Conditions: 150 mM KOAc, 10 mM MgCl2 and 150 mM bicine (pH 8.5), 24 C.
Chemical mapping of a 207-nucleotide RNA with 2A3 and DMS.
The data come from the RNA Mapping Database (RMDB), library RNAMAK.
As a SHAPE reagent, 2A3 marks flexible, mostly unpaired nucleotides at the ribose 2'-OH.
For DMS, 2,661 sequencing reads were counted.
RNA sequence: GGGAACGACUCGAGUAGAGUCGAAAAGUGCCUUCGGGCACAAUAACACCUUUGUGUGCGCAGACUAUUGUCAGUCCUCCGUACUCCCAUUGGGAGUACGAGGACUUGGAUUUAUAGUCUUCCCGCACACUCUGGUAAGCGAGGUCUUCGGACCUAAGACUCUGUGAGUAUUCGUACUCACAGAGUCAAAAGAAACAACAACAACAAC
Reactivity to 2A3 in 0.01 (KOAc 150mM, MgCl2 10mM, bicine 150mM(pH8.5), 24C), signal-to-noise 3, nucleotides 027 to 156: g000u010g000c010c020u040u070c300g020g000g000c020a000c000a000a000u100a050a030c060a000c000c000u000u010u000g000u000g000u000g000c020g080c300a000g000a010c000u000a000u020u030g020u010c000a010g000u000c000c000u080c080c020g000u000a000c000u040c000c000c110a300u280u300g010g000g000a000g000u000a000c000g000a000g010g000a000c000u000u030g010g020a010u060u300u180a020u010a000g000u000c000u000u020c000c000c000g000c000a000c000a000c000u000c000u010g020g010u020a030a020g120c130g120a040g000g000u000c000u050u110c220g130g020a000c000c000u020a050a040
Reactivity to DMS in 0.01 (KOAc 150mM, MgCl2 10mM, bicine 150mM(pH8.5), 24C), signal-to-noise 1, nucleotides 027 to 156: g010u010g020c020c000u010u010c300g090g030g060c000a000c040a030a060u000a090a160c060a100c010c010u000u000u010g030u000g040u020g010c000g080c140a020g000a060c000u000a000u000u000g010u000c010a040g000u000c000c010u000c020c070g030u000a000c010u020c000c020c010a300u000u000g090g020g020a070g030u000a020c000g020a010g010g010a000c000u000u020g010g010a040u000u010u000a000u010a010g010u000c000u010u000c050c110c000g000c000a000c000a000c000u000c020u010g000g020u000a060a110g000c080g000a120g000g000u000c020u000u010c230g030g000a010c000c000u000a020a080